The data come from the RNA Mapping Database (RMDB), library TTRDEL.
The record gives the reactivity of an RNA of 177 nucleotides to DMS.
For DMS, 7,952 sequencing reads were counted.

RNA sequence: GGGAACGACUCGAGUAGAGUCGAAAAGAUAUGGACUGAAGCGAUAAGCCACCCAUCGGAAACGAUGGCGUGGCUUUUGACGCUUCUGUCCUAAGUCAAAACCGAAAUGCGUUCGCGCAUUUCGGAACUUCUACAAAAAGUUCGCUUUUUGUAGAAGAAAAGAAACAACAACAACAAC
Reactivity to DMS in 0.01 (KOAc 150mM, MgCl2 10mM, bicine 150mM(pH8.5), 24C), signal-to-noise 5, nucleotides 027 to 126: g000a030u010a290u010g000g000a020c000u000g000a010a000g010c010g010a130u000a040a040g020c000c000a010c010c010c000a000u000c000g010g000a090a060a110c010g010a000u000g010g000c300g030u010g000g010c010u000u010u000u000g010a170c050g010c000u000u010c000u000g000u000c000c000u000a010a070g000u010c030a090a070a120a190c000c000g000a000a020a000u000g000c000g010u010u010c220g010c020g000c000a000u000u010u000c010g010g010a010a030